[RMDB]
RNA sequence: GGGAACGACUCGAGUAGAGUCGAAAACGCGAACUGUUCGCAGUUCGCGAAAUAACAAACAACAGCUAACCUACUGCGAUAAGCCCUAGCAAAGUAGGUAAAAAAGAGGAAAGUUCGCUUUCCUCAAUCGUAACGAAUGGUUCGCCAUUCGUUACGAAAAAGAAACAACAACAACAAC
Reactivity to 2A3 in 0.01 (KOAc 150mM, MgCl2 10mM, bicine 150mM(pH8.5), 24C), signal-to-noise 2, nucleotides 027 to 126: c000g010c010g010a000a010c000u000g020u040u040c180g010c100a010g000u010u000c000g000c000g010a000a010a000u030a040a010c050a020a100a010c040a030a020c040a040g090c030u160a020a040c000c000u000a000c010u000g020c020g000a000u050a140a050g010c000c000c000u020a030g000c010a030a040a000g000u010a000g040g000u010a010a040a000a000a020a010g010a010g030g020a020a000a000g030u170u260c260g090c260u000u010u000c010c000u000c000a000a020
Reactivity to DMS in 0.01 (KOAc 150mM, MgCl2 10mM, bicine 150mM(pH8.5), 24C), signal-to-noise 3, nucleotides 027 to 126: c020g020c000g010a000a000c000u000g000u010u020c200g020c000a000g010u010u000c000g040c010g020a000a020a040u000a100a090c180a100a090a140c100a040a030c080a070g020c130u000a110a040c000c010u000a010c000u010g010c160g000a110u000a090a140g020c000c000c010u010a150g010c010a020a120a040g010u010a010g010g000u000a000a050a050a060a030a060g000a010g000g010a010a010a000g010u000u000c150g010c020u000u000u000c010c010u000c000a020a040
Overview: An RNA of 177 nucleotides, treated with 2A3 and DMS and read out base by base. DMS adducts were read by reverse transcription with MarathonRT. The reactions ran in a buffer of 150 mM KOAc, 10 mM MgCl2 and 150 mM bicine (pH 8.5), at 24 C. High DMS reactivity at an A or C suggests that its Watson-Crick edge is free. Reactivities are given for positions 27 through 126. For 2A3, 3,585 sequencing reads were counted.